[RMDB]
RNA sequence: GGGAACGACUCGAGUAGAGUCGAAAACAUAGCGUUUCACAAUGUGCGCCAUUAACAUCGUUUAUGCAAGCACGUUUCGCAAUGUACGGCGCAGAAACAUUGCCAACACAAAUACGCUUCACGAUGUAAAACAUCGGUGCGUUCGCGCACCGAUGAACUAACCGUAGUUCUUCGGAACUACGGUUAGAAAAGAAACAACAACAACAAC
Reactivity to DMS in 0.01 (KOAc 150mM, MgCl2 10mM, bicine 150mM(pH8.5), 24C), signal-to-noise 2, nucleotides 027 to 156: c030a130u020a090g020c040g000u000u030u000c090a110c100a070a080u010g020u010g000c000g000c010c020a210u000u000a110a120c010a020u000c050g050u020u010u000a030u000g030c010a060a060g000c040a130c110g010u000u000u000c060g000c040a030a040u000g020u000a050c010g020g020c070g070c010a090g020a180a110a030c020a070u000u000g020c000c030a020a040c060a110c160a080a110a130u000a090c070g040c010u010u000c080a050c030g020a060u000g000u000a080a140a150a210c070a010u020c000g080g020u000g010c000g030u030u000c220g010c030g000c010a010c000c020g040a000u000g000a050a120
Reactivity to 2A3 in 0.01 (KOAc 150mM, MgCl2 10mM, bicine 150mM(pH8.5), 24C), signal-to-noise 6, nucleotides 027 to 156: c050a060u170a020g070c050g020u030u140u160c170a130c040a110a170u150g020u050g040c010g010c020c030a090u140u140a100a010c010a010u030c020g020u030u080u150a170u150g050c100a010a030g010c020a020c180g000u010u050u050c030g000c010a010a000u010g010u040a050c090g050g000c040g020c060a010g070a020a090a000c010a010u010u010g000c020c050a050a010c040a040c030a100a200a060u260a080c120g010c010u020u030c010a010c020g000a010u020g030u140a050a050a040a030c000a000u000c000g000g000u000g020c010g000u040u050c200g000c000g000c040a000c000c010g000a000u000g000a000a000